The record gives the reactivity of an RNA of 177 nucleotides to DMS and 2A3. Values cover nucleotides 27 to 126. Values are in units of 0.01, from 0 to 300, in steps of 10. The DMS profile rests on 1,868 reads. The reactions ran in a buffer of 150 mM KOAc, 10 mM MgCl2 and 150 mM bicine (pH 8.5), at 24 C. The 2A3 profile rests on 640 reads.
RNA sequence: GGGAACGACUCGAGUAGAGUCGAAAAUCUUUAAAAUGAUCGAGGGGAAAAUUAACCAUAUCCUCUCGUUGGUCUAAGCUCCCACAGAGUGUAGUGGUCUCAAGUGAGGCUUAACGUAUGCGUGAACUUCUGAGUAGGCAUUCGUGCCUACUCAGAAAAAAGAAACAACAACAACAAC
Reactivity to DMS in 0.01 (KOAc 150mM, MgCl2 10mM, bicine 150mM(pH8.5), 24C), signal-to-noise 2, nucleotides 027 to 126: u040c010u000u030u000a070a080a110a060u040g000a000u010c050g010a000g030g000g000g010a030a060a060a040u000u020a040a160c300c210a080u000a100u030c000c010u000c000u000c000g010u010u000g020g000u000c110u000a060a120g060c130u050c030c000c000a090c190a090g090a140g000u020g000u000a020g040u050g010g000u000c000u020c010a210a080g000u000g000a140g000g000c010u000u000a070a000c180g000u040a010u000g000c080g020u000g000a040a070c040
Reactivity to 2A3 in 0.01 (KOAc 150mM, MgCl2 10mM, bicine 150mM(pH8.5), 24C), signal-to-noise 1, nucleotides 027 to 126: u000c020u020u030u060a110a030a000a010u270g000a020u180c040g000a060g000g000g010g000a060a050a060a010u170u070a120a000c070c000a120u090a010u090c000c000u000c000u000c000g000u000u000g010g080u000c020u000a010a000g000c000u000c020c030c000a090c080a000g110a000g100u050g000u000a000g000u000g000g010u000c020u000c090a210a180g070u180g300a000g080g030c060u090u070a000a000c100g000u020a000u000g000c040g000u050g020a020a120c040